[RMDB]
RNA sequence: GGGAACGACUCGAGUAGAGUCGAAAAGAAAAUGAGUGCCUCACACUCUGAGGAAAAACAAAAUCUCACGAUAGGUGAGCUAUCAAAAACAAAAUGCACUGUACGAGUGCCGUACAAAAGAAAGAAAGGGUUACAUAGAGUUCGCUCUAUGUAACCCAAAAGAAACAACAACAACAAC
Reactivity to 2A3 in 0.01 (KOAc 150mM, MgCl2 10mM, bicine 150mM(pH8.5), 24C), signal-to-noise 1, nucleotides 027 to 126: g030a000a160a020a000u300g000a000g000u060g130c090c000u000c000a000c000a000c030u080c000u000g000a000g040g170a000a130a000a000a000c190a000a100a000a000u010c000u000c000a030c030g090a060u080a030g090g150u050g000a020g000c000u020a080u030c080a050a050a000a010a020c070a000a170a130a000u070g000c000a010c050u030g040u120a060c000g020a040g070u220g050c040c000g000u030a000c000a010a100a000a010g110a040a100a000g090a020a020a000
Reactivity to DMS in 0.01 (KOAc 150mM, MgCl2 10mM, bicine 150mM(pH8.5), 24C), signal-to-noise 1, nucleotides 027 to 126: g000a060a020a070a060u000g000a000g020u020g000c300c000u010c000a000c020a050c020u000c000u000g000a020g020g050a010a060a020a100a080c300a150a070a070a030u040c000u000c000a030c140g070a000u040a060g000g000u010g000a000g000c050u040a000u000c030a030a020a020a080a080c100a130a070a040a040u000g000c060a060c060u000g010u000a020c000g000a050g040u000g000c080c110g020u000a020c120a020a050a000a050g000a020a160a120g000a110a060a050
The data come from the RNA Mapping Database (RMDB), library OK1LIB. This 177-nucleotide RNA was probed chemically with 2A3 and DMS. For 2A3, 1,582 sequencing reads were counted. 2A3 adducts were read by reverse transcription with SuperScript II with manganese.